[RMDB]
RNA sequence: GGGAACGACUCGAGUAGAGUCGAAAAGGAAACAAGUCAAGUAACUGCUCCAAUCAGUUUAAUAUCAGUGACGUCCUCUAUGCGAGGACAAUAUAUUAAAUGGAUAAAAGGAGCAGGAGAAAAAAAAUCACUAAACUUGAUUCGUCAAGUUUAGUGAAAAAGAAACAACAACAACAAC
Reactivity to 2A3 in 0.01 (KOAc 150mM, MgCl2 10mM, bicine 150mM(pH8.5), 24C), signal-to-noise 2, nucleotides 027 to 126: g050g010a070a040a040c040a070a050g110u120c060a110a010g010u050a150a040c000u000g020c000u000c000c020a000a010u020c020a040g010u000u050u000a000a000u020a000u020c080a040g150u050g240a050c100g010u010c020c000u020c020u110a180u300g100c100g030a000g010g000a000c000a000a000u030a000u000a000u000u010a000a000a000u020g010g020a030u070a140a180a070a210g000g000a030g050c000a000g020g000a010g020a040a020a010a000a010a000a010a050
Reactivity to DMS in 0.01 (KOAc 150mM, MgCl2 10mM, bicine 150mM(pH8.5), 24C), signal-to-noise 3, nucleotides 027 to 126: g000g000a100a110a070c070a080a110g010u000c100a150a070g000u010a130a190c010u000g010c000u000c010c000a040a060u010c000a080g030u000u000u000a000a010u000a000u010c190a110g050u020g030a120c190g010u000c000c000u000c010u000a150u000g010c230g010a010g000g010a020c000a010a020u000a030u000a000u010u000a000a000a010u000g000g010a020u000a030a060a070a170g000g010a010g040c000a010g010g010a130g000a010a000a000a070a070a090a100a190
This 177-nucleotide RNA was probed chemically with 2A3 and DMS. The data come from the RNA Mapping Database (RMDB), library M2PK90. For DMS, 2,010 sequencing reads were counted. 2A3 adducts were read by reverse transcription with SuperScript II with manganese. For 2A3, 2,047 sequencing reads were counted.